[RMDB]
RNA sequence: GGGAACGACUCGAGUAGAGUCGAAAAUGCCUGACCUGGGGAGAGUCACACUUACCAGGAAGCUGCUAAGGGGAGAGGAUUCCUGCUCUGGGUCAGAGAAUAGAGAGCGUAGCUGGAACCAGGUGAACUCUGAGGUCCGUGACUGCAAGACUCCAGAGAUUUAAUCCUACUUCGGUAGGAUUAAAUCAAAAGAAACAACAACAACAAC
Reactivity to 2A3 in 0.01 (KOAc 150mM, MgCl2 10mM, bicine 150mM(pH8.5), 24C), signal-to-noise 2, nucleotides 027 to 156: u070g030c000c010u010g010a030c010c010u020g010g000g050g000a060g000a010g060u080c030a040c010a020c110u070u110a130c050c020a010g020g040a000a070g020c040u080g000c040u110a080a160g020g040g020g010a080g000a070g090g030a100u020u020c010c000u060g070c020u020c020u020g050g010g000u040c020a000g000a000g000a110a040u160a050g160a000g010a010g040c050g040u060a010g020c030u060g060g010a070a070c050c030a020g010g020u050g050a020a000c030u030c000u100g050a110g040g020u040c030c030g060u050g030a110c020u030g010c000a070a020g040a060c020u020c030c010a020g020a000
Reactivity to DMS in 0.01 (KOAc 150mM, MgCl2 10mM, bicine 150mM(pH8.5), 24C), signal-to-noise 1, nucleotides 027 to 156: u010g040c060c000u000g020a060c020c000u010g000g120g010g000a100g000a110g010u010c060a170c040a200c010u010u000a050c110c020a070g020g000a140a210g010c040u000g040c020u000a090a100g010g050g000g000a210g020a120g060g000a180u000u000c010c020u000g040c060u000c000u000g020g020g050u010c010a070g000a080g020a020a160u020a160g010a090g010a040g070c040g030u000a100g010c000u020g020g030a090a180c050c030a230g020g000u000g020a070a120c100u000c020u020g000a060g000g060u000c020c080g020u000g000a130c110u000g000c050a100a090g010a040c000u020c000c000a070g060a300
Structure probing data (2A3 and DMS) for a 207-nucleotide construct.
For DMS, 1,613 sequencing reads were counted.
For 2A3 the reverse transcriptase was SuperScript II with manganese.